[RMDB]
RNA sequence: GGGAACGACUCGAGUAGAGUCGAAAAGCCGAUGAAUUGCCGAGAAGCCUGGCUCGAAAUCGUCGACGCAUCGACGACGGUCCUGCCAUGAGACCGUAACGAGGACAUGUCGCCUAGAAUGGCGUCGUAUAACAUGAGUGGUUCGCCACUCAUGUAAACGAAUCUAACCUUUCGAGGUUAGAUUCGUAAAAGAAACAACAACAACAAC
Reactivity to DMS in 0.01 (KOAc 150mM, MgCl2 10mM, bicine 150mM(pH8.5), 24C), signal-to-noise 2, nucleotides 027 to 156: g040c020c020g000a090u010g000a020a100u020u000g010c000c000g000a080g000a080a140g030c030c040u040g020g000c000u000c040g000a020a020a140u020c050g030u010c020g030a040c100g050c110a170u000c060g010a070c000g040a020c000g010g000u000c020c010u020g030c020c130a150u020g000a090g010a090c030c070g000u000a010a080c060g010a060g000g000a120c050a090u000g010u000c070g000c020c010u000a110g010a150a130u000g010g010c040g020u000c020g040u000a060u000a090a040c000a010u000g030a030g050u010g000g010u000u000c300g000c030c000a030c010u000c000a010u000g010u000a030a120
Reactivity to 2A3 in 0.01 (KOAc 150mM, MgCl2 10mM, bicine 150mM(pH8.5), 24C), signal-to-noise 4, nucleotides 027 to 156: g050c000c010g020a020u060g020a070a200u100u120g030c040c020g030a030g030a120a020g020c030c080u060g040g000c030u020c030g060a090a090a010u040c020g010u010c010g000a030c060g030c130a140u080c010g030a030c010g010a010c000g000g020u000c000c020u090g170c050c030a120u110g030a030g010a170c000c000g000u010a010a010c030g020a030g000g040a030c050a120u190g020u020c030g010c020c010u090a140g150a160a080u150g040g030c010g000u000c030g020u090a190u040a110a030c000a000u000g000a010g010u010g040g010u020u060c170g040c030c000a000c000u010c010a000u000g000u000a010a000
Record summary: Structure probing data (DMS and 2A3) for a 207-nucleotide construct. DMS adducts were read by reverse transcription with MarathonRT. The DMS profile rests on 3,230 reads. The RNA was probed in 150 mM KOAc, 10 mM MgCl2 and 150 mM bicine (pH 8.5) at 24 C.